[RMDB]
RNA sequence: GGGAACGACUCGAGUAGAGUCGAAAAGAUAUGGAUCGGAUUAGGGAGUCGGUAUUCGGAAACGAAUACUCGACGACGAUCUAAAUCGAUCCUAAGUCAAACAAAGGGUACUUCGGUACCCUUUGAAGAAAUACUUCUUCUUCGGAAGAAGUAUUUCAAAAGAAACAACAACAACAAC
Reactivity to 2A3 in 0.01 (KOAc 150mM, MgCl2 10mM, bicine 150mM(pH8.5), 24C), signal-to-noise 2, nucleotides 027 to 126: g000a000u030a010u060g010g000a000u010c030g010g030a030u080u070a000g060g000g050a090g010u010c000g000g000u010a010u000u010c010g000g000a030a010a030c010g000a000a040u020a000c100u120c170g010a010c000g010a010c000g010a030u000c000u010a030a000a040u150c000g000a000u000c000c000u010a040a010g030u020c050a130a080a160c000a010a050a060g010g000g000u040a000c020u110u170c300g110g030u010a010c000c010c000u000u010u000g000a000a000
Reactivity to DMS in 0.01 (KOAc 150mM, MgCl2 10mM, bicine 150mM(pH8.5), 24C), signal-to-noise 4, nucleotides 027 to 126: g000a040u010a140u010g000g000a010u000c000g000g010a150u010u000a010g010g020g010a050g030u000c000g000g010u000a000u000u000c000g010g010a040a050a100c000g010a010a000u000a000c000u010c050g030a010c000g010a080c300g000a080u010c000u000a000a020a060u010c010g010a010u010c000c000u000a020a110g010u000c020a180a120a300c010a000a020a010g000g010g000u000a000c010u000u020c270g030g010u000a000c000c000c000u000u000u000g000a080a100